[RMDB]
RNA sequence: GGGAACGACUCGAGUAGAGUCGAAAAAGCCGGUCUACGGACCGGCAAAACGUUCAUCUCGUUUUACGGGCCGCAUUAAGAUCGAAGCCAAGGAACGGGGACUUCAGACUACGACUACGGUCGUAGAUUACGCCUCCGAGUUUCGACUCGGAGGCAACUACUUUACCUGAUUCGUCAGGUAAAGUAGAAAAGAAACAACAACAACAAC
Reactivity to 2A3 in 0.01 (KOAc 150mM, MgCl2 10mM, bicine 150mM(pH8.5), 24C), signal-to-noise 2, nucleotides 027 to 156: a010g000c000c000g000g010u020c000u020a050c270g090g010a060c030c010g000g000c040a000a020a000a000c090g040u090u050c100a170u070c040u020c020g010u000u020u030u050a050c080g000g000g020c010c000g040c080a100u240u100a190a030g040a120u170c020g030a060a000g000c000c020a010a100g040g000a050a000c020g000g010g000g030a030c040u110u110c150a060g020a120c000u000a000c000g000a000c000u010a020c180g080g000u000c000g000u020a000g000a000u040u110a050c120g000c000c030u010c000c000g000a020g000u060u070u160c160g120a050c010u000c000g000g000a000g000g000c000a000a000
Reactivity to DMS in 0.01 (KOAc 150mM, MgCl2 10mM, bicine 150mM(pH8.5), 24C), signal-to-noise 1, nucleotides 027 to 156: a210g000c010c010g000g040u000c010u010a080c300g060g000a050c010c010g020g040c010a010a010a050a050c090g010u000u000c070a170u020c030u010c030g000u000u000u000u000a080c080g020g000g010c000c030g000c070a150u010u000a090a190g010a190u000c080g020a090a040g020c020c030a080a180g000g000a060a100c060g000g000g010g000a100c030u010u000c030a150g030a180c020u000a010c030g010a060c010u010a100c300g060g000u000c010g020u010a000g000a060u010u010a070c130g000c000c000u010c000c000g000a020g000u020u010u010c190g000a090c000u000c000g010g040a010g050g010c010a000a020